[RMDB]
RNA sequence: GGGAACGACUCGAGUAGAGUCGAAAAGGAUCCUCUCACAGGAUUUUCUCUGUGUUUCGAAAAUCCUGCAGAUUUGCUUCGGAACACCAACAGCAAAUCUGUUGGUAUAGAGAAAAUGAGAGGAUCGCUUGUGCUGUGUAUUCGUACAUAGCACAAGAAAAGAAACAACAACAACAAC
Reactivity to 2A3 in 0.01 (KOAc 150mM, MgCl2 10mM, bicine 150mM(pH8.5), 24C), signal-to-noise 9, nucleotides 027 to 126: g020g000a000u000c000c000u000c000u010c010a040c050a090g220g020a070u010u000u020u000c020u000c030u030g070u010g020u080u070u070c020g010a030a010a020a050u030c010c030u040g000c020a000g000a010u050u050u060g020c020u040u050c040g020g050a080a060c090a090c100c000a020a020c000a030g020c020a030a030a080u050c000u000g000u000u010g000g020u050a100u140a080g080a000g030a030a050a010a020u060g000a000g000a000g000g000a000u000c000g000
Reactivity to DMS in 0.01 (KOAc 150mM, MgCl2 10mM, bicine 150mM(pH8.5), 24C), signal-to-noise 9, nucleotides 027 to 126: g010g000a000u000c000c000u000c000u000c010a110c180a140g010g000a050u000u000u000u000c010u000c050u010g010u000g010u000u010u010c050g000a050a040a040a040u000c020c050u010g010c090a070g000a040u000u000u010g010c090u000u010c300g010g000a110a060c270a100c040c010a020a130c180a010g000c100a050a060a090u010c000u000g010u000u000g000g000u000a150u000a030g000a090g000a040a020a020a050u000g000a010g000a020g020g000a000u000c000g000
Description:
An RNA of 177 nucleotides, treated with 2A3 and DMS and read out base by base. The RNA was probed in 150 mM KOAc, 10 mM MgCl2 and 150 mM bicine (pH 8.5) at 24 C. DMS adducts were read by reverse transcription with MarathonRT. The DMS profile rests on 30,823 reads. Source: RMDB library OK2TRN, as collected in RNAgym. Values cover nucleotides 27 to 126. Values are in units of 0.01, from 0 to 300, in steps of 10.